[RMDB]
RNA sequence: GGGAACGACUCGAGUAGAGUCGAAAAGGAAGAAAGAGAGGCUCCAAGAGUAGUAGGACUGGGAACAUAUGAGAAAGCAUGAGCUCUAUCCAUCUAUCCAUCCCCUCCCAUUCGCUAGAAUGUUGCACGUAACGUAUAACUUCGGUUAUACGUUACGAAAAGAAACAACAACAACAAC
Reactivity to DMS in 0.01 (KOAc 150mM, MgCl2 10mM, bicine 150mM(pH8.5), 24C), signal-to-noise 4, nucleotides 027 to 126: g000g010a060a060g000a060a160a080g010a060g000a080g010g000c040u010c050c060a080a080g010a080g030u000a040g020u000a070g010g020a070c060u000g000g000g000a070a060c080a040u010a070u010g000a100g000a110a100a100g020c050a040u000g000a060g020c000u000c020u010a100u010c020c020a060u000c030u000a060u000c020c020a070u020c020c000c010c040u000c000c020c000a100u010u010c060g010c120u000a060g010a060a040u000g000u000u000g030c100a200
Reactivity to 2A3 in 0.01 (KOAc 150mM, MgCl2 10mM, bicine 150mM(pH8.5), 24C), signal-to-noise 3, nucleotides 027 to 126: g000g010a020a030g010a030a100a000g060a000g000a010g020g010c030u000c030c040a070a030g040a030g090u110a020g020u070a020g020g030a050c050u050g000g030g020a070a040c020a050u160a080u170g100a110g090a090a040a020g050c060a030u080g020a010g020c000u000c000u020a030u020c010c010a020u000c020u050a130u000c010c020a040u080c030c010c000c000u000c000c010c000a040u070u030c050g000c050u050a050g020a090a040u100g040u060u070g080c090a050
Overview
Chemical mapping of a 177-nucleotide RNA with DMS and 2A3. Reactivities are given for positions 27 through 126. The DMS profile rests on 3,391 reads. The RNA was probed in 150 mM KOAc, 10 mM MgCl2 and 150 mM bicine (pH 8.5) at 24 C. DMS (dimethyl sulfate) methylates the pairing face of unpaired adenines and cytosines.